[RMDB]
RNA sequence: GGGAACGACUCGAGUAGAGUCGAAAACAUCCACUGCUACGGCAGUGGAUGAACGAGGUAGGUACGCCUACCUCGAAAGUAGGAUGUAUACAUAUACAUUAAACGUCCAUGGUACGCCAUGGACGAACGCCCGAUUAUUAUUCGUAAUAAUCGGGCGAAAAGAAACAACAACAACAAC
Reactivity to 2A3 in 0.01 (KOAc 150mM, MgCl2 10mM, bicine 150mM(pH8.5), 24C), signal-to-noise 2, nucleotides 027 to 126: c000a000u000c010c030a020c020u000g010c000u030a100c230g170g000c000a010g000u000g000g010a010u000g000a000a000c010g000a010g000g000u000a000g010g000u040a020c180g090c040c000u000a010c010c000u000c000g000a030a010a000g110u170a050g160g150a020u040g040u040a030u050a110c110a070u300a000u020a160c000a020u050u080a090a120a050c000g000u000c000c020a010u010g030g000u030a050c270g050c040c000a000u000g000g000a000c000g000a000a000
Reactivity to DMS in 0.01 (KOAc 150mM, MgCl2 10mM, bicine 150mM(pH8.5), 24C), signal-to-noise 2, nucleotides 027 to 126: c000a010u000c020c040a000c010u020g040c000u010a080c160g050g000c000a010g000u010g020g000a000u010g010a020a160c000g050a000g000g010u010a050g000g010u030a130c300g020c000c000u000a010c000c000u020c010g020a010a000a100g030u010a060g040g000a010u000g010u010a000u020a250c260a120u010a090u000a000c030a010u000u000a050a070a250c000g000u000c000c000a020u010g000g040u000a060c260g040c020c000a000u010g000g000a000c000g000a010a030
Record summary:
Structure probing data (2A3 and DMS) for a 177-nucleotide construct. For DMS, 1,165 sequencing reads were counted. DMS adducts were read by reverse transcription with MarathonRT. Values cover nucleotides 27 to 126. Conditions: 150 mM KOAc, 10 mM MgCl2 and 150 mM bicine (pH 8.5), 24 C. For 2A3 the reverse transcriptase was SuperScript II with manganese. It was measured as part of the RMDB library OK2TRN.